Chemical mapping of a 177-nucleotide RNA with DMS. The RNA was probed in 150 mM KOAc, 10 mM MgCl2 and 150 mM bicine (pH 8.5) at 24 C.

[RMDB]
RNA sequence: GGGAACGACUCGAGUAGAGUCGAAAACAACAGGGAGGUUGGUCGUGGACGAGCCACUCGCCAACCGGGUCAGGUCCGGAAGGAAGCAGCCCUAACGAGCCAGGCACGGGUCGCCGUGCCAGUACAAGUAAACGCCAUCUUUCGAGAUGGCGUUUACAAAAGAAACAACAACAACAAC
Reactivity to DMS in 0.01 (KOAc 150mM, MgCl2 10mM, bicine 150mM(pH8.5), 24C), signal-to-noise 1, nucleotides 027 to 126: c160a030a110c070a210g000g000g000a040g000g000u000u000g000g020u000c250g000u000g000g000a290c130g000a270g110c040c000a000c000u000c160g000c010c060a000a150c080c070g000g030g010u000c020a300g000g000u000c000c030g010g060a030a230g150g000a060a020g060c000a280g000c020c000c020u060a020a030c200g000a040g000c030c020a130g010g000c020a030c010g000g020g000u000c300g030c000c000g000u000g020c020c030a010g020u000a060c130a030a160